[RMDB]
RNA sequence: GGGAACGACUCGAGUAGAGUCGAAAAACACCAUCGCGUACCGCUGGGUGCACACCGAUGAUUGGACCGGUCGGCAACUGGGUAUUGUUGUUCAUGCAGACCUUGUGCGAAUCCAUCCGUUCACCGAACCCUUCGAUAAGUUCGCUUAUCGAAGGGUAAAAGAAACAACAACAACAAC
Reactivity to DMS in 0.01 (KOAc 150mM, MgCl2 10mM, bicine 150mM(pH8.5), 24C), signal-to-noise 3, nucleotides 027 to 126: a040c130a140c060c010a100u000c080g020c030g010u000a100c090c050g010c060u020g000g000g020u000g000c100a130c060a120c070c030g010a160u000g010a090u010u000g020g000a040c070c080g000g010u000c070g020g000c050a030a080c050u000g030g000g020u000a080u000u010g010u000u010g010u010u000c130a050u010g010c050a070g010a060c040c030u000u000g020u010g000c020g010a090a080u000c010c010a070u000c040c020g010u000u010c040a110c030c020g010a090
Reactivity to 2A3 in 0.01 (KOAc 150mM, MgCl2 10mM, bicine 150mM(pH8.5), 24C), signal-to-noise 3, nucleotides 027 to 126: a000c050a040c030c010a060u090c100g030c020g070u070a060c000c060g000c130u130g070g080g040u030g000c070a000c020a020c100c010g020a080u090g010a040u000u230g030g020a040c050c040g040g040u070c020g090g020c010a060a080c050u090g000g050g090u070a180u080u130g100u080u060g060u130u150c060a030u130g000c000a010g010a060c000c020u030u070g010u000g030c030g030a020a020u000c030c000a020u000c000c000g000u030u000c070a090c180c000g020a070
Conditions: 150 mM KOAc, 10 mM MgCl2 and 150 mM bicine (pH 8.5), 24 C. An RNA of 177 nucleotides, treated with DMS and 2A3 and read out base by base. It was measured as part of the RMDB library OK2TRN. For 2A3 the reverse transcriptase was SuperScript II with manganese. Values cover nucleotides 27 to 126. The 2A3 profile rests on 2,465 reads.